[RMDB]
RNA sequence: GGGAACGACUCGAGUAGAGUCGAAAACCCCCUCCGGGGUCUCCUCGAAUCGGGCUGGCUCAUCCUCGAUUGCGAGCGGCGGUCCUGAGAACUCUUAUCUUCCUGCUUAGAAGAGGAGUCUCCUGGAACGAUAGUAAAGUUUCGACUUUACUAUCGUAAAAGAAACAACAACAACAAC
Reactivity to DMS in 0.01 (KOAc 150mM, MgCl2 10mM, bicine 150mM(pH8.5), 24C), signal-to-noise 3, nucleotides 027 to 126: c040c030c000c170c070u000c010c010g040g030g030g000u000c010u000c040c000u000c010g010a140a050u000c040g010g000g000c040u000g000g000c070u010c050a090u000c070c000u000c080g020a170u000u000g020c080g020a030g010c140g010g020c090g010g000u000c020c010u000g010a070g010a070a090c090u000c050u000u010a060u000c060u000u000c030c030u000g010c100u000u000a080g010a070a250g010a010g010g000a020g030u000c010u010c000c030u000g000g000a090